[RMDB]
RNA sequence: GGGAACGACUCGAGUAGAGUCGAAAACUUGUUAACAUUGUCUUGGGGUCCUCCGAAUCAGGUCAACUGGAGACGAGGAUUCAUCGCACAAUGGAAGAGCACAGUCCUUUGGAUUGGGUCUCGCAUCCGCUAAAUGGUCCUUGAAAACCGGAUUAUGCCUACUCAUCUCGUUCGCGAGAUGAGUAGGAAAAGAAACAACAACAACAAC
Reactivity to 2A3 in 0.01 (KOAc 150mM, MgCl2 10mM, bicine 150mM(pH8.5), 24C), signal-to-noise 1, nucleotides 027 to 156: c010u030u150g030u160u160a050a020c000a000u050u000g050u000c000u030u300g000g010g000g000u010c000c000u000c020c000g070a010a060u090c000a040g040g080u160c060a080a070c110u000g000g050a010g050a020c140g000a000g000g000a000u100u050c000a040u050c000g040c000a000c070a060a080u050g010g000a070a000g000a000g000c030a000c020a080g010u050c000c000u220u240u280g000g020a020u050u050g010g050g050u130c000u030c050g110c150a050u010c050c090g000c070u040a050a030a030u130g000g010u010c000c000u010u160g040a040a030a000a020c080c000g000g000a030u100u030a100u270g020
Structure probing data (2A3) for a 207-nucleotide construct.
Conditions: 150 mM KOAc, 10 mM MgCl2 and 150 mM bicine (pH 8.5), 24 C.
As a SHAPE reagent, 2A3 marks flexible, mostly unpaired nucleotides at the ribose 2'-OH.
The data come from the RNA Mapping Database (RMDB), library PDB130.
Reactivities are given for positions 27 through 156.
The 2A3 profile rests on 504 reads.